[RMDB]
RNA sequence: GGGAACGACUCGAGUAGAGUCGAAAAUGCCUGUUCGCAGGCAAAAAGGGGUCCCAGGCCGAGGCGUGGCAGCUGCUACACUGAAGCCUCCACGGUGUAGCAUCAGGCUGCACGCUAUCCUGGGACGGAGGCACCCAAAGCUGCCUUUCGAGGCAGCGAGCUAGCGGAAGUUCGCUUCCGCUAGCUCAAAAGAAACAACAACAACAAC
Reactivity to 2A3 in 0.01 (KOAc 150mM, MgCl2 10mM, bicine 150mM(pH8.5), 24C), signal-to-noise 1, nucleotides 027 to 156: u030g000c060c000u030g020u020u070c290g040c130a080g000g020c110a000a000a000a180a040g060g010g040g010u040c060c000c000a050g050g030c220c240g150a230g000g020c030g000u070g180g170c010a000g000c000u190g050c000u000a000c000a000c000u060g060a120a000g000c000c020u000c000c000a000c010g010g000u000g000u000a000g000c000a100u210c060a110g000g090c020u000g000c030a000c000g000c000u000a000u000c000c000u020g000g010g020a000c000g000g030a000g000g000c010a060c010c000c000a110a040a090g000c000u010g000c000c000u010u130u140c210g040a020g000g000c000a000g000c000